[RMDB]
This 177-nucleotide RNA was probed chemically with 2A3 and DMS. DMS adducts were read by reverse transcription with MarathonRT.
RNA sequence: GGGAACGACUCGAGUAGAGUCGAAAAAGUUCAGUUCAGAGGGAAUCUACCCACUGAUGGAGCUAGUGUCUGGAGCAGACAGUGUGAUAAACCCUCUGAUCAAUAAAUUAAUAUCAGGUAUGCUGAACCAUGUAAACGAGUUCGCUCGUUUACAUGGAAAAGAAACAACAACAACAAC
Reactivity to 2A3 in 0.01 (KOAc 150mM, MgCl2 10mM, bicine 150mM(pH8.5), 24C), signal-to-noise 4, nucleotides 027 to 126: a000g070u070u080c060a030g000u010u010c010a000g000a010g060g000g000a050a090u000c030u070a140c010c060c000a010c010u070g040a100u110g070g090a110g050c050u060a030g060u030g060u080c040u030g070g020a010g000c020a010g060a100c000a030g030u020g020u050g110a080u080a070a130a100c010c000c000u000c010u010g010a010u020c010a000a060u110a100a040a020u180u190a060a080u080a040u190c000a000g080g010u210a070u200g080c010u010g000a040a060
Reactivity to DMS in 0.01 (KOAc 150mM, MgCl2 10mM, bicine 150mM(pH8.5), 24C), signal-to-noise 4, nucleotides 027 to 126: a130g010u000u000c060a090g010u000u000c000a010g000a020g010g010g000a130a100u010c150u000a090c020c080c000a030c030u000g010a170u010g020g000a100g010c060u000a050g010u010g010u000c050u000g000g000a040g000c010a040g010a130c070a030g020u000g020u020g010a070u000a050a130a110c000c000c000u000c000u000g000a010u010c080a060a100u010a050a060a110u010u000a050a110u010a070u010c050a040g020g020u010a060u000g000c020u000g000a040a220
The reactions ran in a buffer of 150 mM KOAc, 10 mM MgCl2 and 150 mM bicine (pH 8.5), at 24 C. Source: RMDB library OK2TRN, as collected in RNAgym. For 2A3 the reverse transcriptase was SuperScript II with manganese.